[RMDB]
RNA sequence: GGGAACGACUCGAGUAGAGUCGAAAAGAUUUGAUGCUAGGCAACCAGGUCUCCUCGGAGUCACUCAGUGCUUUGGGCGGACAAGCUGGCCCAGAUGAAAAUGACGGAACGGAAAAUGCCGAGCAAAAUCGGCAUUAUGAUUCGUCAUAAUGCCGAUAAAAGAAACAACAACAACAAC
Reactivity to 2A3 in 0.01 (KOAc 150mM, MgCl2 10mM, bicine 150mM(pH8.5), 24C), signal-to-noise 4, nucleotides 027 to 126: g050a020u070u100u280g070a060u090g000c010u010a010g010g010c010a030a050c020c010a030g030g040u000c030u010c030c010u000c030g030g020a030g080u110c010a030c060u190c080a080g030u040g080c030u040u030u020g010g010g010c050g020g000a030c040a070a100g130c030u060g050g000c000c000c010a020g000a060u100g040a070a120a040a010u030g010a030c050g000g040a110a030c040g020g050a000a050a060a070u070g000c020c010g000a000g000c040a030a020a030
Reactivity to DMS in 0.01 (KOAc 150mM, MgCl2 10mM, bicine 150mM(pH8.5), 24C), signal-to-noise 8, nucleotides 027 to 126: g010a140u010u010u000g000a160u000g010c030u000a080g020g010c020a050a170c050c040a080g010g000u000c030u000c300c010u010c040g010g000a060g010u010c020a050c050u010c160a130g010u010g010c040u000u000u000g010g000g020c100g000g000a100c090a080a100g010c040u000g010g000c090c000c010a050g000a060u000g000a050a070a090a080u000g000a140c050g000g010a060a090c100g010g000a060a040a070a120u010g010c000c010g000a040g010c070a050a030a100